Structure probing data (DMS and 2A3) for a 177-nucleotide construct. For 2A3, 565 sequencing reads were counted. For 2A3 the reverse transcriptase was SuperScript II with manganese. The RNA was probed in 150 mM KOAc, 10 mM MgCl2 and 150 mM bicine (pH 8.5) at 24 C. DMS adducts were read by reverse transcription with MarathonRT.
[RMDB]
RNA sequence: GGGAACGACUCGAGUAGAGUCGAAAAUGCCUUAACUUUUGUGAAAAUUCUGAGAAUUGUUUCCAAUUCACAAUAUGGCAAUAUCCUAGAAUAAUGAACAGGAACUCUGUGCAAUGGCAUUGGAGCUUAAACGCCUACGAUUCGUCGUAGGCGUUUAAAAAGAAACAACAACAACAAC
Reactivity to DMS in 0.01 (KOAc 150mM, MgCl2 10mM, bicine 150mM(pH8.5), 24C), signal-to-noise 2, nucleotides 027 to 126: u000g030c030c000u000u130a100a080c160u000u040u040u030g030u000g000a030a000a100a100u000u030c120u000g000a170g010a050a100u020u070g000u000u000u000c030c200a050a100u000u000c050a000c000a000a020u000a050u030g000g020c000a040a010u010a150u000c000c000u000a090g080a200a130u110a080a150u000g000a050a170c020a140g000g010a070a250c080u030c000u000g000u000g030c010a170a040u000g020g110c020a010u000u010g050g000a070g000c100u000
Reactivity to 2A3 in 0.01 (KOAc 150mM, MgCl2 10mM, bicine 150mM(pH8.5), 24C), signal-to-noise 2, nucleotides 027 to 126: u020g010c010c000u020u070a040a050c120u110u040u000u000g010u000g020a000a000a050a050u290u070c070u140g020a010g000a250a140u100u070g050u220u190u000c030c060a080a170u040u040c000a010c000a000a010u030a070u200g000g090c010a010a040u020a080u020c060c000u050a130g130a040a010u190a070a000u060g040a010a120c000a010g100g040a010a000c000u010c040u100g030u000g000c000a070a140u010g110g000c000a000u070u300g000g000a010g010c000u000